[RMDB]
RNA sequence: GGGAACGACUCGAGUAGAGUCGAAAACAUCAGGAGGACCUUCCGCGCACUUCCAAGCAGGAGCUUUCCUUCCAAGCGCACUUCCAAUCUACUCGAGAGGAGGAGGAGGAGCAGGAUUCCCACAAAACAUAAAAGCGAGGUUCGCCUCGCUUUUAUGAAAAGAAACAACAACAACAAC
Reactivity to 2A3 in 0.01 (KOAc 150mM, MgCl2 10mM, bicine 150mM(pH8.5), 24C), signal-to-noise 1, nucleotides 027 to 126: c010a060u120c060a040g010g010a010g030g000a030c000c000u090u020c030c020g040c020g000c060a060c070u180u000c070c000a050a060g030c060a060g060g030a040g000c060u080u100u100c000c000u040u080c030c000a080a050g080c000g000c090a020c020u000u000c010c000a040a100u000c020u090a070c010u000c030g040a030g000a020g050g070a020g000g060a010g020g000a010g010g050a020g030c020a010g000g110a090u040u010c020c040c000a050c020a000a060a020a010
Reactivity to DMS in 0.01 (KOAc 150mM, MgCl2 10mM, bicine 150mM(pH8.5), 24C), signal-to-noise 3, nucleotides 027 to 126: c090a050u000c080a150g000g010a070g010g010a130c300c030u000u000c010c010g020c070g050c100a070c080u000u000c060c090a070a160g010c020a110g000g020a090g010c100u000u000u000c040c020u010u010c020c020a130a120g010c070g000c100a060c070u000u000c020c000a190a090u010c010u000a040c030u000c010g000a060g010a190g020g000a050g010g010a050g010g020a040g000g000a060g020c040a070g010g000a110u000u000c000c000c010a130c230a030a030a060a120
Source: RMDB library M2PK90, as collected in RNAgym. This 177-nucleotide RNA was probed chemically with 2A3 and DMS.